Chemical mapping of a 177-nucleotide RNA with DMS and 2A3. The 2A3 profile rests on 356 reads. The reactions ran in a buffer of 150 mM KOAc, 10 mM MgCl2 and 150 mM bicine (pH 8.5), at 24 C. DMS adducts were read by reverse transcription with MarathonRT. 2A3 is a SHAPE reagent: it acylates the 2'-hydroxyl of flexible nucleotides of all four kinds. The DMS profile rests on 2,458 reads.
RNA sequence: GGGAACGACUCGAGUAGAGUCGAAAAGACCGGGCGGACAUAUUAGUAUCUGUUAAAGGGUCGCCGUCUACUCUCAUCGUUCUUUUGUGUACAAAUUUUUUAAAGGAGCGAUGUUGAUGGCAUUAUGCAAGCCCGUAUUUUUCGAAAUACGGGCUUGAAAAGAAACAACAACAACAAC
Reactivity to DMS in 0.01 (KOAc 150mM, MgCl2 10mM, bicine 150mM(pH8.5), 24C), signal-to-noise 2, nucleotides 027 to 126: g060a140c040c000g030g010g000c010g040g000a060c160a050u000a100u030u050a110g000u030a130u000c020u020g010u000u060a070a120a110g000g000g000u000c040g010c020c000g030u000c000u000a020c110u030c060u080c050a010u000c010g010u010u030c000u000u000u000u000g000u070g020u010a130c300a040a040a090u060u030u030u020u020u040a010a040a000g020g020a070g010c000g000a030u010g020u000u000g000a030u000g010g000c040a090u030u070a050u030g000
Reactivity to 2A3 in 0.01 (KOAc 150mM, MgCl2 10mM, bicine 150mM(pH8.5), 24C), signal-to-noise 1, nucleotides 027 to 126: g120a050c000c020g000g020g000c000g020g010a030c140a030u190a060u150u300a060g040u120a020u060c050u060g110u020u210a180a110a140g140g000g010u000c090g000c000c000g040u080c000u000a020c040u050c030u000c000a010u000c000g060u000u000c000u000u040u010u010g260u080g000u000a010c020a050a260a090u140u120u000u100u150u180a010a000a000g040g000a000g000c000g000a000u010g040u040u000g000a020u070g000g000c000a000u140u190a130u230g010